[RMDB]
RNA sequence: GGGAACGACUCGAGUAGAGUCGAAAAAGAUCGUCCGCAUCCUUUCUUGCCUGCACCCACUUUUCGAGGAUGUCUUCCCUUCCUCCCCUCCGGGAUUUCUUCUGAUCGGACUGGCUCAUCCUCGGAACCAGCGAUUGCUUCGGCAAUCGCAAAAGAAACAACAACAACAAC
Reactivity to 2A3 in 0.01 (KOAc 150mM, MgCl2 10mM, bicine 150mM(pH8.5), 24C), signal-to-noise 4, nucleotides 027 to 129: a000g100a080u090c050g020u030c040c030g030c050a060u060c000c020u020u090u070c010u020u080g040c010c010u020g020c020a060c000c020c000a050c030u060u040u020u040c020g000a010g000g020a010u030g040u010c020u020u040c030c000c000u010u020c000c020u000c000c000c000c000u030c020c020g030g000g040a000u040u050u020c020u080u010c050u080g050a050u040c030g030g000a020c030u030g020g000c020u010c020a050u000c000c000u000c000g000g000a010a020c010c000a000
Reactivity to DMS in 0.01 (KOAc 150mM, MgCl2 10mM, bicine 150mM(pH8.5), 24C), signal-to-noise 4, nucleotides 027 to 129: a000g010a120u010c000g020u060c040c030g030c020a140u010c080c060u020u020u060c070u010u030g030c000c010u000g020c090a140c100c020c000a070c140u040u030u010u020c040g030a060g050g000a060u050g020u020c130u000u010c020c020c000u010u030c050c010u010c050c010c010c030u050c040c030g020g030g050a100u070u050u000c090u010u040c060u020g020a000u040c070g000g110a000c050u040g010g000c090u010c050a070u030c020c030u010c060g010g030a000a020c130c040a110

An RNA of 170 nucleotides, treated with 2A3 and DMS and read out base by base. For DMS the reverse transcriptase was MarathonRT. For 2A3, 11,657 sequencing reads were counted. High DMS reactivity at an A or C suggests that its Watson-Crick edge is free. The reactions ran in a buffer of 150 mM KOAc, 10 mM MgCl2 and 150 mM bicine (pH 8.5), at 24 C. For DMS, 14,773 sequencing reads were counted.